[RMDB]
RNA sequence: GGGAACGACUCGAGUAGAGUCGAAAAUUAUACCCGCAUAUCAUUCAGACCCUUUAUGGAACUGUCAUUCAACCCCAGAAAUCUAGUGCAAAUAUUGUCUUAAUUACUUAGGCUAAAAGAAAUAAGUUAUACAAUACACUCUUCGGAGUGUAUUGAACUAUUAGGCAUAGUUCGCUAUGCCUAAUAGAAAAGAAACAACAACAACAAC
Reactivity to DMS in 0.01 (KOAc 150mM, MgCl2 10mM, bicine 150mM(pH8.5), 24C), signal-to-noise 3, nucleotides 027 to 156: u010u010a150u000a180c020c000c050g060c100a170u000a100u000c050a100u000u010c020a150g010a150c020c040c000u000u020u020a080u010g010g010a100a060c060u000g020u000c050a130u000u000c060a100a150c060c030c010c010a190g000a060a080a120u000c040u000a060g030u000g000c040a090a100a150u010a080u000u000g020u010c020u000u000a080a100u000u000a060c060u000u000a070g010g030c040u000a050a070a090a140g020a090a090a090u020a060a080g000u000u000a140u000a170c000a000a020u000a020c000a000c000u000c000u000u000c300g010g010a030g030u000g020u000a000u000u000g020a050a130
Reactivity to 2A3 in 0.01 (KOAc 150mM, MgCl2 10mM, bicine 150mM(pH8.5), 24C), signal-to-noise 2, nucleotides 027 to 156: u100u020a040u090a160c000c000c010g030c040a180u120a060u120c030a040u010u140c060a030g030a110c020c030c030u100u090u170a080u160g000g000a040a020c020u030g040u030c030a020u100u140c040a020a160c010c000c020c000a040g050a000a110a020u100c090u040a030g020u000g110c010a000a020a110u130a090u060u110g000u000c000u030u140a090a070u020u060a100c060u010u080a030g060g050c000u070a050a000a130a050g040a020a190a040u090a030a040g000u020u010a090u000a140c000a000a000u000a010c000a000c000u020c010u030u030c200g050g000a000g000u000g000u000a000u000u010g000a010a000